[RMDB]
RNA sequence: GGGAACGACUCGAGUAGAGUCGAAAAGAUAUGGAUCCUGCGGGAGUGUACUACUUCGGAAACGAAGUAGACACGAGGAUCGCAGGAGUCCUAAGUCAAAAGAUAAACGGCUUCGGCCGUUUAUCAACAAAAUGUGUAUCUUCGGAUACACAUUUUGAAAAGAAACAACAACAACAAC
Reactivity to DMS in 0.01 (KOAc 150mM, MgCl2 10mM, bicine 150mM(pH8.5), 24C), signal-to-noise 4, nucleotides 027 to 126: g000a010u000a010u010g000g000a090u000c000c000u000g010c000g010g010g010a010g030u000g020u000a100c000u000a010c000u000u000c000g010g000a010a010a030c010g010a020a010g010u000a000g000a020c000a000c000g010a060g010g000a010u010c000g010c000a010g000g000a020g010u010c000c000u000a000a100g000u000c000a090a070a150a160g000a010u000a000a010a010c000g010g010c000u000u010c250g030g010c000c000g010u000u000u000a000u000c000a100a200
Reactivity to 2A3 in 0.01 (KOAc 150mM, MgCl2 10mM, bicine 150mM(pH8.5), 24C), signal-to-noise 1, nucleotides 027 to 126: g000a000u010a000u050g010g000a020u000c010c000u000g000c010g020g000g000a030g010u030g000u040a290c000u000a010c000u000u000c000g010g020a010a010a000c000g010a000a000g000u000a010g000a000c010a010c000g010a130g020g000a010u010c010g000c000a000g000g020a020g060u030c000c000u010a000a000g000u000c020a010a000a100a190g000a000u020a010a000a000c030g000g000c050u100u130c300g150g000c010c010g000u010u000u010a000u000c000a000a010

An RNA of 177 nucleotides, treated with DMS and 2A3 and read out base by base. The reactions ran in a buffer of 150 mM KOAc, 10 mM MgCl2 and 150 mM bicine (pH 8.5), at 24 C. For 2A3, 6,074 sequencing reads were counted. The data come from the RNA Mapping Database (RMDB), library TTRDEL.